An RNA of 177 nucleotides, treated with 2A3 and DMS and read out base by base.
Source: RMDB library OK2TST, as collected in RNAgym.
DMS adducts were read by reverse transcription with MarathonRT.
Conditions: 150 mM KOAc, 10 mM MgCl2 and 150 mM bicine (pH 8.5), 24 C.
RNA sequence: GGGAACGACUCGAGUAGAGUCGAAAAUACAAUUGAUGACGCUAAAGCUUGAUCGAAACUAUAUGAAGGUAUCGGUGGAAUUGACGGUGGCGUUAUACCGCCGUAAGCACCUACCAUCAGAGCUAAGAUACCCCGAGGUAUUCGUACCUCGGGGUAUAAAAGAAACAACAACAACAAC
Reactivity to 2A3 in 0.01 (KOAc 150mM, MgCl2 10mM, bicine 150mM(pH8.5), 24C), signal-to-noise 2, nucleotides 027 to 126: u060a010c030a030a080u080u100g000a040u190g040a060c060g000c150u090a100a030a170g070c010u050u040g020a010u040c030g030a070a030a050c030u040a020u030a050u300g020a000a050g070g010u050a040u190c060g040g020u000g030g070a190a160u050u150g010a080c020g010g030u000g000g000c040g000u020u080a070u130a030c000c000g030c000c020g020u020a020a030g000c000a010c000c000u000a000c010c000a000u020c010a020g010a010g000c000u080a090a010g010
Reactivity to DMS in 0.01 (KOAc 150mM, MgCl2 10mM, bicine 150mM(pH8.5), 24C), signal-to-noise 2, nucleotides 027 to 126: u010a120c230a100a100u010u000g000a090u000g000a110c110g010c050u010a070a070a220g000c010u010u000g000a090u000c080g000a080a090a150c080u010a090u000a150u000g030a030a070g020g010u000a000u000c130g010g020u000g000g010a060a120u010u000g010a030c020g010g000u000g000g020c070g000u010u030a060u030a060c010c020g000c000c000g010u000a040a110g010c000a030c020c040u000a000c020c020a050u000c020a030g000a160g020c080u000a070a070g010